Structure probing data (2A3 and DMS) for a 207-nucleotide construct. For DMS, 1,836 sequencing reads were counted. The RNA was probed in 150 mM KOAc, 10 mM MgCl2 and 150 mM bicine (pH 8.5) at 24 C. It was measured as part of the RMDB library OK3TST.
[RMDB]
RNA sequence: GGGAACGACUCGAGUAGAGUCGAAAAGCGAAUAGCAUAGGACACCCAGCCGGCAAGCCCAGCCUAACUGUUACAGUUCCCCCGAAGCCUGACAGAACCGGCGAGGGUGGCGGGUUGAGGCGGGAGGCGGGAUGCCCAGCCGUUCAAUCCAGGCGGGUACACCUGCGUAAUUCGUUACGCAGGUGUAAAAAGAAACAACAACAACAAC
Reactivity to 2A3 in 0.01 (KOAc 150mM, MgCl2 10mM, bicine 150mM(pH8.5), 24C), signal-to-noise 1, nucleotides 027 to 156: g020c070g050a080a060u070a130g030c040a030u070a120g000g020a040c050a030c030c000c000a010g030c000c050g020g110c080a060a000g010c010c010c030a020g040c070c000u040a070a020c030u060g140u180u150a120c040a040g030u010u060c050c040c000c000c020g050a060a000g010c000c020u040g020a060c020a060g060a110a070c030c010g030g000c010g030a070g040g000g010u050g020g000c020g000g000g030u000u020g030a090g010g060c000g010g000g000a080g020g100c000g050g080g020a060u090g000c000c000c020a030g010c000c000g010u020u140c110a070a060u090c080c000a020g000g000c000g020g020g020
Reactivity to DMS in 0.01 (KOAc 150mM, MgCl2 10mM, bicine 150mM(pH8.5), 24C), signal-to-noise 1, nucleotides 027 to 156: g040c060g020a130a140u010a100g050c070a170u000a150g060g000a120c020a090c020c010c000a160g010c020c020g090g030c060a090a170g070c030c010c010a070g000c000c010u000a110a100c040u000g010u010u000a090c130a110g040u000u000c000c000c000c020c170g010a090a150g030c000c020u010g010a210c060a170g020a150a300c060c040g040g000c050g020a220g000g020g020u010g000g020c110g010g020g030u000u000g010a110g000g040c020g010g020g060a090g010g010c000g010g000g020a130u010g040c030c030c010a130g000c010c010g010u000u040c000a140a040u010c000c000a140g000g030c000g000g050g000